Background
The record gives the reactivity of an RNA of 177 nucleotides to 2A3 and DMS. DMS adducts were read by reverse transcription with MarathonRT. The RNA was probed in 150 mM KOAc, 10 mM MgCl2 and 150 mM bicine (pH 8.5) at 24 C.

RNA sequence: GGGAACGACUCGAGUAGAGUCGAAAAGAUAUGGAAUGAUCUGAAUUGCAAUGACGUCGGAAACGAUAAGACAGCAGAUCAGAGUCAUUCCUAAGUCAAAACUUAGACUGGUUCGCCAGUCUAAGAACAAUCUUAGGUUCUUCGGAACCUAAGAUUGAAAAGAAACAACAACAACAAC
Reactivity to 2A3 in 0.01 (KOAc 150mM, MgCl2 10mM, bicine 150mM(pH8.5), 24C), signal-to-noise 4, nucleotides 027 to 126: g010a020u060a050u110g000g000a010a000u000g000a020u000c010u000g010a090a080u150u020g000c080a060a250u150g040a070c080g000u000c010g000g000a110a080a050c020g010a010u030a120a050g110a080c060a040g070c010a000g030a120u020c010a000g000a010g130u040c000a000u020u000c000c000u010a080a010g030u020c030a010a020a070a140c000u000u000a000g010a000c000u000g020g050u070u090c240g020c090c000a000g000u000c000u000a000a000g000a000a010
Reactivity to DMS in 0.01 (KOAc 150mM, MgCl2 10mM, bicine 150mM(pH8.5), 24C), signal-to-noise 5, nucleotides 027 to 126: g010a040u000a300u000g000g010a020a000u000g010a060u000c000u000g000a020a080u000u010g010c000a120a120u000g010a160c300g000u000c000g000g010a110a080a150c010g020a030u000a080a130g010a150c160a090g000c000a020g000a050u000c010a000g000a030g000u000c000a020u000u000c000c000u010a030a100g020u000c030a060a050a110a180c010u000u000a000g000a010c000u000g000g000u000u010c290g010c010c000a000g000u010c000u010a000a000g020a090a170